An RNA of 177 nucleotides, treated with 2A3 and DMS and read out base by base. High DMS reactivity at an A or C suggests that its Watson-Crick edge is free. For DMS the reverse transcriptase was MarathonRT. The reactions ran in a buffer of 150 mM KOAc, 10 mM MgCl2 and 150 mM bicine (pH 8.5), at 24 C.
RNA sequence: GGGAACGACUCGAGUAGAGUCGAAAAGGAAGGGAUUCGAGUACACUGCCCUAAGGUAGAGAGUGGGGUUUGUCGCUGCCAGCAUGCGCAGUUGUCGCUCAUGUUUUGCCAUUUGUUGGCACAGAGACGGUACUGCCUAGUUCGCUAGGCAGUACCGAAAAGAAACAACAACAACAAC
Reactivity to 2A3 in 0.01 (KOAc 150mM, MgCl2 10mM, bicine 150mM(pH8.5), 24C), signal-to-noise 2, nucleotides 027 to 126: g040g020a040a040g050g020g020a040u080u160c040g020a000g020u030a030c070a030c110u040g030c000c000c030u040a050a060g060g020u060a030g010a010g030a050g080u090g010g000g000g000u090u060u140g040u080c000g000c050u060g040c030c000a050g010c060a070u070g000c010g000c070a020g010u100u130g060u090c060g000c060u000c050a120u030g040u040u080u080u090g040c030c060a080u130u090u280g170u040u040g050g030c030a000c030a020g060a010g010a030
Reactivity to DMS in 0.01 (KOAc 150mM, MgCl2 10mM, bicine 150mM(pH8.5), 24C), signal-to-noise 2, nucleotides 027 to 126: g000g000a090a050g020g030g000a130u000u010c060g010a080g020u000a050c110a150c050u010g020c030c030c080u020a080a130g000g010u020a060g000a070g000a090g000u010g000g000g000g000u000u010u000g020u000c050g010c030u000g000c050c070a130g010c110a060u000g000c130g010c020a070g020u010u040g030u010c060g020c020u000c060a070u000g010u000u000u000u000g000c030c010a030u000u000u020g010u000u010g000g010c020a000c150a080g000a110g000a120